[RMDB]
RNA sequence: GGGAACGACUCGAGUAGAGUCGAAAAAGCACUGGUACGAUACGUCGUAACAGUGCAGUCGUUGGGAUGGAACGCAAUUAAAUACAUGUGUGACGUGUAUUUGCGAACGACGUAAUUAUUUUUCAAAAUCACGCUAUCGUGUUCGCACGAUAGCGAACGAACUAUGUGUGUUCGCACACAUAGUUCGAAAAGAAACAACAACAACAAC
Reactivity to DMS in 0.01 (KOAc 150mM, MgCl2 10mM, bicine 150mM(pH8.5), 24C), signal-to-noise 1, nucleotides 027 to 156: a100g040c000a030c000u000g040g000u000a010c010g020a050u000a080c300g070u040c010g050u010a010a010c000a000g020u000g000c030a000g010u000c000g000u000u010g000g000g020a140u020g020g000a100a150c010g010c000a090a100u010u000a020a030a030u000a010c000a020u000g010u000g000u000g030a140c050g040u000g000u020a020u000u000u000g030c100g000a030a100c020g000a080c000g000u000a000a050u000u000a170u000u010u000u000u000c110a030a070a060a110u000c140a150c020g020c010u020a010u000c000g000u000g000u010u000c290g060c010a020c000g000a000u000a010g060c010g000a010a030
Reactivity to 2A3 in 0.01 (KOAc 150mM, MgCl2 10mM, bicine 150mM(pH8.5), 24C), signal-to-noise 5, nucleotides 027 to 156: a000g000c000a000c010u000g010g010u000a000c000g000a010u020a060c260g140u000c010g000u000a010a000c000a020g000u010g000c000a000g010u000c020g000u010u020g080g020g070a120u140g050g090a140a040c010g000c020a030a040u200u130a120a090a010u030a000c000a000u050g070u020g120u210g300a110c030g000u010g010u020a010u000u030u020g000c000g010a000a000c000g010a010c020g040u060a080a080u150u110a100u070u120u020u090u120c060a050a040a050a080u140c070a030c080g000c000u010a000u000c000g000u010g020u060u040c180g030c050a000c000g000a010u000a000g000c000g000a010a010